[RMDB]
RNA sequence: GGGAACGACUCGAGUAGAGUCGAAAAAAGCAACUACAUAUUGUGUUUAUUUUUAACUGAGUAGGGCAAAUAAAUAUAUGUUUGCUGUAGGAACUUAGGAAAUAAUGAGCCACAUUCAUGUGAUCAUUCCAGAGGUAAUAUGUAGUUACCAUUUUGGACACAGUACGAGGUUCGCCUCGUACUGUGUAAAAGAAACAACAACAACAAC
Reactivity to 2A3 in 0.01 (KOAc 150mM, MgCl2 10mM, bicine 150mM(pH8.5), 24C), signal-to-noise 1, nucleotides 027 to 156: a010a010g060c040a000a000c000u060a000c000a000u000a000u020u010g010u010g030u070u100u100a180u060u050u010u000u020a030a070c030u000g040a000g070u110a060g030g040g000c000a000a000a000u060a100a150a000u270a030u130a100u230g070u010u000u000g010c060u100g040u080a040g300g000a030a070c030u010u010a030g010g050a020a020a020u110a020a020u060g010a000g090c050c000a000c000a030u170u290c070a080u200g000u060g000a060u000c000a040u070u020c030c020a060g000a010g180g000u010a010a010u000a000u000g020u000a000g000u000u000a040c000c000a060u020u300u050u080g080g010